[RMDB]
RNA sequence: GGGAACGACUCGAGUAGAGUCGAAAAGCAUCGACGACGGUCCUGCCAUGAGACCGUAACGAGGACAUGUCGCCUCGAAUGGCGUCGGGGAGCCGGCAGCUUACCCCAAGGAUGAGCGCCAAAUGCCUAUACCCGAUUCGCUUCGGCGAAUCGGGAAACAAACGGAAGUGUUCGCACUUCCGUUUGUAAAAGAAACAACAACAACAAC
Reactivity to 2A3 in 0.01 (KOAc 150mM, MgCl2 10mM, bicine 150mM(pH8.5), 24C), signal-to-noise 1, nucleotides 027 to 156: g040c000a030u140c050g090a100c020g010a020c000g010g000u050c000c000u030g150c050c060a220u180g050a130g000a030c020c010g000u000a000a050c030g000a000g000g000a000c060a180u150g010u110c070g010c000c000u000c000g040a030a060u070g000g000c000g030u040c030g020g000g030g000a010g050c080c000g140g020c100a060g000c030u050u090a300c000c010c000c010a020a040g110g000a140u150g020a050g060c010g020c050c000a000a100a070u080g010c000c000u140a150u060a140c000c000c000g000a000u000u000c000g000c010u050u080c240g020g000c030g010a000a000u000c000g010g000g000a030a000